[RMDB]
RNA sequence: GGGAACGACUCGAGUAGAGUCGAAAAGAUACUCUGGCUUAUUAUGCUCACAGCGUGUUGUACAGAGUUUUUCCUUAUGACAUGGAUUCUGGUGUGUCAUCCUUUAGUGAACUACUUUUUGAUUGCGCUGUCAUUCUAGGUUCGCCUAGAAUGACAGAAAAGAAACAACAACAACAAC
Reactivity to 2A3 in 0.01 (KOAc 150mM, MgCl2 10mM, bicine 150mM(pH8.5), 24C), signal-to-noise 2, nucleotides 027 to 126: g010a020u050a010c000u000c010u010g000g000c010u030u110a070u260u020a010u200g000c020u040c090a100c040a060g020c030g010u020g000u070u060g020u080a150c000a010g010a000g020u010u000u000u000u010c000c000u000u070a060u050g010a010c000a030u080g030g030a090u130u030c060u140g050g010u050g020u000g020u070c010a020u060c010c030u150u140u100a120g030u060g100a100a090c030u120a050c020u070u050u050u050u210g160a170u070u140g000c110g000
Reactivity to DMS in 0.01 (KOAc 150mM, MgCl2 10mM, bicine 150mM(pH8.5), 24C), signal-to-noise 2, nucleotides 027 to 126: g020a060u000a000c010u000c000u000g000g000c040u010u000a070u060u020a010u000g000c020u000c300a130c260a110g030c000g000u000g000u000u000g020u000a060c030a030g000a030g000u000u010u000u010u000c000c000u000u010a060u010g000a050c060a030u000g000g000a150u000u000c100u000g020g020u020g010u000g010u000c020a030u010c140c060u010u000u000a050g030u010g010a130a070c090u000a040c110u000u000u000u000u000g000a140u000u010g000c090g020
Structure probing data (2A3 and DMS) for a 177-nucleotide construct. The reactions ran in a buffer of 150 mM KOAc, 10 mM MgCl2 and 150 mM bicine (pH 8.5), at 24 C.